[RMDB]
RNA sequence: GGGAACGACUCGAGUAGAGUCGAAAAUCGUCGCCGGUGUCGCCCCGAACGCACUUACUUCGACGAGAUGGCGCGACCCCUACGCCGGCACCCCCUGGCACAAGCACGUGCCCGCCGCCAUCCGCCGUACGCAAGUAACAUUCGUGUUACUUGCGUAAAAAGAAACAACAACAACAAC
Reactivity to 2A3 in 0.01 (KOAc 150mM, MgCl2 10mM, bicine 150mM(pH8.5), 24C), signal-to-noise 6, nucleotides 027 to 126: u100c040g080u030c050g000c020c010g010g010u040g030u050c020g030c000c000c010c020g050a060a030c050g050c070a050c040u080u100a080c020u120u170c030g080a070c010g020a050g030a240u060g030g010c030g000c010g060a090c000c000c010c010u020a020c020g010c010c000g020g000c000a050c020c010c000c000c010u040g010g000c010a010c000a090a110g120c060a090c160g010u020g000c000c020c000g030c030c020g010c000c000a010u010c000c010g010c020c010g040
Reactivity to DMS in 0.01 (KOAc 150mM, MgCl2 10mM, bicine 150mM(pH8.5), 24C), signal-to-noise 4, nucleotides 027 to 126: u030c090g020u020c100g040c030c020g000g050u020g000u010c070g000c020c010c010c040g020a130a140c130g000c080a080c060u010u030a080c170u010u030c030g000a070c050g000a090g000a080u010g000g010c000g000c040g000a190c060c020c030c050u010a070c080g010c010c020g000g020c030a190c030c010c020c030c030u000g000g000c020a020c040a080a140g030c120a060c110g000u010g000c040c010c030g010c070c020g000c000c020a060u010c030c000g020c000c000g010
This 177-nucleotide RNA was probed chemically with 2A3 and DMS. DMS adducts were read by reverse transcription with MarathonRT. The DMS profile rests on 8,035 reads. The reactions ran in a buffer of 150 mM KOAc, 10 mM MgCl2 and 150 mM bicine (pH 8.5), at 24 C. 2A3 adducts were read by reverse transcription with SuperScript II with manganese.